Notes: This 177-nucleotide RNA was probed chemically with 2A3. For 2A3 the reverse transcriptase was SuperScript II with manganese.
RNA sequence: GGGAACGACUCGAGUAGAGUCGAAAAGAAUCGCUUCCUGCAGGGUCAAGGACAAGGUCAGGUAGGCCAUGCUCCCUUCGGCAUGUGUCCCAGGCCCUUGAUCUUGGACCCUGGACAUCUCGUGUAAAACACAGCCACACUUCGGUGUGGCUGUGUUAAAAGAAACAACAACAACAAC
Reactivity to 2A3 in 0.01 (KOAc 150mM, MgCl2 10mM, bicine 150mM(pH8.5), 24C), signal-to-noise 1, nucleotides 027 to 126: g060a070a050u120c000g020c070u070u010c000c060u060g090c000a000g010g040g040u000c020a040a090g000g000a000c000a010a010g000g000u000c000a000g000g080u020a120g000g000c020c000a000u000g000c000u170c040c020c000u100u160c060g000g020c120a000u000g170u040g050u080c050c050c000a010g010g000c100c010c040u000u010g110a160u020c000u040u000g090g000a000c060c000c010u000g000g000a120c020a110u050c070u020c180g020u130g090u200a030a050